An RNA of 207 nucleotides, treated with 2A3 and DMS and read out base by base. Source: RMDB library M2RFPK, as collected in RNAgym. The 2A3 profile rests on 4,374 reads. Conditions: 150 mM KOAc, 10 mM MgCl2 and 150 mM bicine (pH 8.5), 24 C. Reactivities are given for positions 27 through 156.

RNA sequence: GGGAACGACUCGAGUAGAGUCGAAAAUCGAAAUCAUCGGGAGUGAUCCAGAUGACGGUCCUGCCAUGAGACCGCAACGAGAGCAUGUCGCAUCGAAUGGACUCGGGGAGUCGGCAGCUUACCCCACUAAGGCAGACGUUGUUCGCAACGUCUGCAACAGUUUUCAAAAGUUCGCUUUUGAAAACUGAAAAGAAACAACAACAACAAC
Reactivity to 2A3 in 0.01 (KOAc 150mM, MgCl2 10mM, bicine 150mM(pH8.5), 24C), signal-to-noise 5, nucleotides 027 to 156: u070c010g020a020a000a040u020c010a000u010c020g020g010g000a040g040u100g030a100u030c010c000a010g010a020u030g020a020c020g000g000u010c000c010u040g110c010c010a110u130g030a040g000a090c010c010g010c060a040a040c040g040a020g000a010g090c080a110u120g020u090c040g000c030a060u050c030g050a060a060u090g050g030a050c050u020c070g030g000g010g000a090g060u130c030g020g000c000a010g010c000u050u120a120c000c000c020c000a030c070u110a070a070g150g000c000a000g000a000c000g000u010u010g010u040u080c120g000c100a000a000c000g000u000c000u000g000c000a000a000
Reactivity to DMS in 0.01 (KOAc 150mM, MgCl2 10mM, bicine 150mM(pH8.5), 24C), signal-to-noise 2, nucleotides 027 to 156: u020c020g010a040a080a110u000c000a050u000c010g010g040g010a090g030u020g010a300u010c010c000a040g000a020u010g020a080c020g040g030u000c010c020u010g000c120c090a140u020g000a100g000a020c030c050g070c040a080a150c040g000a140g010a180g030c040a120u000g010u000c010g000c020a140u000c050g010a150a300u000g020g000a060c030u000c050g000g000g000g000a120g010u000c010g010g010c060a140g030c070u000u000a140c020c000c000c030a100c140u010a080a130g000g010c000a000g010a030c000g020u000u000g010u000u000c230g020c000a040a030c040g000u000c000u000g010c000a010a040